[RMDB]
RNA sequence: GGGAACGACUCGAGUAGAGUCGAAAACCGUUGCCGUUCGCGGCAACGGGAAGCAAGCAAGCAGCGCAACGAGACAAGACGAUAAUGUGAUCGCGCAUGCUGAAAAGCCACGCUUCGGCGUGGCUAAUUUCCAGUCUUCUUUCGAGAAGACUGGAAAAAAAGAAACAACAACAACAAC
Reactivity to DMS in 0.01 (KOAc 150mM, MgCl2 10mM, bicine 150mM(pH8.5), 24C), signal-to-noise 1, nucleotides 027 to 126: c000c000g010u000u000g020c000c000g090u020u000c180g020c000g000g000c000a000a000c020g020g000g020a060a070g040c210a060a080g010c130a070a050g020c020a060g010c000g020c030a080a130c140g010a050g010a040c080a040a020g040a090c180g010a160u010a130a010u000g020u000g000a220u000c060g020c050g000c000a010u000g020c010u000g000a080a050a060a040g000c000c010a030c000g040c000u010u060c100g040g020c020g050u000g000g000c010u000a000a010